[RMDB]
RNA sequence: GGGAACGACUCGAGUAGAGUCGAAAAUCAUGCUAUCACCUGCUAACUGGUUGACGUCCAGUUAGAUCUGAGCGAGAGUUCAGGAGGUGUCUUUGACGUCAACGAAGACGCUAAGGUGAUAGCAUGCCUAGUAGAAUCAAUUCGUUGAUUCUACUAGAAAAGAAACAACAACAACAAC
Reactivity to 2A3 in 0.01 (KOAc 150mM, MgCl2 10mM, bicine 150mM(pH8.5), 24C), signal-to-noise 9, nucleotides 027 to 126: u090c000a000u000g000c000u000a000u000c000a000c000c000u020g020c000u020a010a010c000u010g020g040u030u070g100a040c030g080u000c010c000a000g000u000u010a010g000a010u010c010u010g000a000g010c010g010a060g010a010g060u010u010c010a000g010g040a070g020g020u030g010u010c000u000u010u030g040a050c040g100u090c040a020a020c020g020a010a000g000a000c010g000c010u020a020a010g000g000u000g000a000u000a000g000c000a000u000g000c000
Reactivity to DMS in 0.01 (KOAc 150mM, MgCl2 10mM, bicine 150mM(pH8.5), 24C), signal-to-noise 9, nucleotides 027 to 126: u020c010a000u000g000c000u000a000u000c000a000c000c000u000g010c000u000a010a040c010u000g000g000u000u000g010a090c230g010u000c000c080a020g000u000u000a010g000a070u000c000u000g000a010g000c000g000a240g000a220g010u000u000c000a010g000g010a100g010g010u000g000u000c000u000u000u000g010a090c140g010u010c190a060a090c010g000a010a010g000a050c040g010c000u000a080a010g000g010u000g000a010u000a000g000c000a000u000g000c230